[RMDB]
RNA sequence: GGGAACGACUCGAGUAGAGUCGAAAACGUAGGUCGCGCAAUUUGGGUAAGGUCAUCGAUACCCUUACGUGCGGCUUCGCCGACCUCAUGGGGUACAUACCGCUCGUCGGCGCCCCUCUUGGAGGCGCAAACGACGGAGUUUCGACUCCGUCGUUUGAAAAGAAACAACAACAACAAC
Reactivity to 2A3 in 0.01 (KOAc 150mM, MgCl2 10mM, bicine 150mM(pH8.5), 24C), signal-to-noise 9, nucleotides 027 to 126: c090g070u110a030g000g010u010c000g000c000g000c040a060a130u040u040u080g020g000g010u030a040a070g090g090u210c100a130u240c160g060a050u070a080c000c010c000u000u010a030c060g000u010g000c000g000g000c000u020u010c000g000c010c010g120a300c010c000u060c030a070u100g000g000g000g030u050a080c030a140u230a050c020c010g060c050u180c160g300u130c010g040g000c010g000c000c000c000c000u050c060u030u090g060g010a010g000g000c010g000
Reactivity to DMS in 0.01 (KOAc 150mM, MgCl2 10mM, bicine 150mM(pH8.5), 24C), signal-to-noise 9, nucleotides 027 to 126: c080g010u030a040g000g010u010c000g000c000g010c030a080a160u020u020u010g000g010g020u000a040a170g000g000u030c200a090u040c080g000a180u010a020c000c000c000u010u010a030c240g000u000g000c010g000g010c010u010u010c020g010c040c010g000a110c010c020u000c150a090u010g010g000g000g020u020a090c150a140u050a180c030c000g000c010u050c210g000u040c040g000g000c220g000c020c000c010c000u010c140u030u010g010g010a300g000g000c040g000